[RMDB]
RNA sequence: GGGAACGACUCGAGUAGAGUCGAAAACAAGUUAAAGGUCUCGGUCACCUGGUUCAUGCCCAAGUAAACAAAAUGUGCGAGUCAGAACAAGAACCACCCCCAAGUGCAUGGCUGUUUUCAUUUAGUUACGGUUUGGAGCAAGAUUUGUAGUGGGUGAGUUUUAAAUCAGGUUCGCCUGAUUUAAAACAAAAGAAACAACAACAACAAC
Reactivity to 2A3 in 0.01 (KOAc 150mM, MgCl2 10mM, bicine 150mM(pH8.5), 24C), signal-to-noise 2, nucleotides 027 to 156: c030a020a060g110u160u180a120a110a090g040g000u000c030u000c040g060g020u090c020a030c050c010u020g030g020u020u060c030a050u120g020c030c040c080a030a010g100u140a030a120a100c130a110a070a110a150u130g030u030g030c020g000a020g030u030c040a000g030a050a050c050a070a000g090a060a000c040c010a010c010c010c030c010c000a040a010g030u000g100c050a010u070g010g000c020u000g020u030u040u040u140c020a070u050u090u240a080g030u060u060a060c020g080g060u070u070u070g020g000a010g020c000a020a010g030a070u080u080u100g080u050a010g030u050g010g010g000u020g010a030
Reactivity to DMS in 0.01 (KOAc 150mM, MgCl2 10mM, bicine 150mM(pH8.5), 24C), signal-to-noise 2, nucleotides 027 to 156: c020a050a140g010u010u010a020a070a080g000g010u000c000u000c070g000g000u000c070a050c010c020u010g070g040u000u000c040a090u000g010c000c020c030a070a120g000u000a050a080a210c060a090a050a100a170u000g010u000g030c050g040a090g000u000c060a120g000a060a040c050a050a080g010a040a030c010c100a150c040c020c000c030c000a070a160g010u000g000c020a100u000g030g030c030u000g040u000u000u000u000c010a120u000u000u000a110g030u000u000a060c030g030g040u000u000u000g000g010a080g000c020a070a100g000a070u000u020u000g010u020a050g000u000g000g010g030u000g000a080
The data come from the RNA Mapping Database (RMDB), library OK3TST. This 207-nucleotide RNA was probed chemically with 2A3 and DMS. For 2A3, 610 sequencing reads were counted. 2A3 adducts were read by reverse transcription with SuperScript II with manganese. Conditions: 150 mM KOAc, 10 mM MgCl2 and 150 mM bicine (pH 8.5), 24 C.